[RMDB]
RNA sequence: GGGAACGACUCGAGUAGAGUCGAAAAGGACUUAGGUUCGCCUAAGUCCAAAUAACGUCUACAAGUACGGUAGACGAAGAUAACGUACAGUUCAGAAGUACAAAAGGAGAGACUUCGGUCUCUCCAACACUUUAGCUAACUUCGGUUAGCUAAAGUGAAAAGAAACAACAACAACAAC
Reactivity to DMS in 0.01 (KOAc 150mM, MgCl2 10mM, bicine 150mM(pH8.5), 24C), signal-to-noise 3, nucleotides 027 to 126: g000g000a020c000u000u000a000g000g010u010u010c240g010c000c010u000a000a010g010u000c000c000a010a030a050u000a060a100c030g000u000c000u000a000c010a040a100g010u000a050c140g020g000u000a000g000a010c010g020a070a070g020a110u000a080a080c130g030u010a090c090a120g000u010u000c160a070g000a150a060g020u000a010c030a090a070a080a100g010g010a000g000a010g000a010c000u000u010c180g040g010u000c000u000c000u000c000c010a020a070
Reactivity to 2A3 in 0.01 (KOAc 150mM, MgCl2 10mM, bicine 150mM(pH8.5), 24C), signal-to-noise 5, nucleotides 027 to 126: g000g010a000c000u000u000a000g000g030u020u060c180g070c040c000u010a000a000g000u000c000c000a000a000a000u000a010a010c000g010u000c000u000a000c000a110a120g130u050a060c100g060g000u000a010g000a000c050g010a030a020g070a050u150a110a040c100g010u090a070c060a060g010u050u150c040a080g040a300a030g120u020a020c010a020a130a020a030g010g000a000g000a000g000a000c000u020u050c170g040g010u010c000u000c000u000c000c000a000a000